[RMDB]
An RNA of 177 nucleotides, treated with DMS and 2A3 and read out base by base. Reactivities are given for positions 27 through 126. The reactions ran in a buffer of 150 mM KOAc, 10 mM MgCl2 and 150 mM bicine (pH 8.5), at 24 C. For DMS, 11,077 sequencing reads were counted. It was measured as part of the RMDB library TTRDEL.

RNA sequence: GGGAACGACUCGAGUAGAGUCGAAAAGAUAUGGAGUAAGAGUAGGAACUACAGCACUAUGUCGGAAACGACAUACUGCUGCCGCAGAUACUUACUCCUAAGUCAAAUCCGAUGUUCGCAUCGGAAACUUGUUAAUAUGGUUCGCCAUAUUAACAAGAAAAGAAACAACAACAACAAC
Reactivity to DMS in 0.01 (KOAc 150mM, MgCl2 10mM, bicine 150mM(pH8.5), 24C), signal-to-noise 8, nucleotides 027 to 126: g000a040u000a300u000g000g010a010g000u000a010a020g000a090g010u010a040g000g020a140a070c090u010a290c010a010g000c000a010c090u000a000u000g000u000c000g010g000a120a070a180c010g010a010c000a000u000a000c160u000g000c000u000g010c010c050g000c130a120g000a070u000a030c000u000u000a000c000u010c000c000u000a020a080g000u000c020a080a110a170u000c000c000g000a010u000g010u000u010c240g010c000a010u000c000g010g000a010a040a100
Reactivity to 2A3 in 0.01 (KOAc 150mM, MgCl2 10mM, bicine 150mM(pH8.5), 24C), signal-to-noise 6, nucleotides 027 to 126: g030a010u070a040u150g000g000a000g000u010a000a010g020a020g060u120a140g070g040a110a070c160u280a090c300a010g000c000a000c010u010a000u010g010u000c000g010g020a050a040a030c010g010a000c000a000u000a000c020u000g000c000u020g030c010c020g030c140a010g010a070u030a040c000u000u000a000c000u000c010c000u020a080a010g030u010c030a010a020a220u000c000c000g000a010u000g040u070u140c300g000c160a000u000c000g020g000a040a020a040